[RMDB]
RNA sequence: GGGAACGACUCGAGUAGAGUCGAAAAGGGGUCAGGUACUAAGGCGUUAGAGAGCUUGGAUUUAUAUGGCUGAAGCCUCCACGGCCAUAUUGUCAGCUCUUUAACGCUAUGUACCUGACGGAGGCACCCAAAAGUACUCCUGUUCGCAGGAGUACAAGGAUCACACUCAGUUCGCUGAGUGUGAUCCAAAAGAAACAACAACAACAAC
Reactivity to 2A3 in 0.01 (KOAc 150mM, MgCl2 10mM, bicine 150mM(pH8.5), 24C), signal-to-noise 1, nucleotides 027 to 156: g010g000g050g000u010c010a030g000g010u000a000c000u060a050a300g160g000c000g000u010u000a000g000a010g000a000g000c090u240u230g170g000a050u040u300u050a010u050a000u000g000g000c010u020g000a120a050g000c000c010u000c000c000a040c000g000g000c000c000a000u000a000u010u000g070u030c070a050g000c000u050c030u000u000u000a000a000c000g000c000u000a000u000g000u010a000c010c010u000g010a000c000g010g010a000g000g000c010a030c020c000c000a020a130a010a050g000u010a000c000u000c000c000u000g050u030u150c300g060c040a000g000g000a000g000u000a000c000a010a010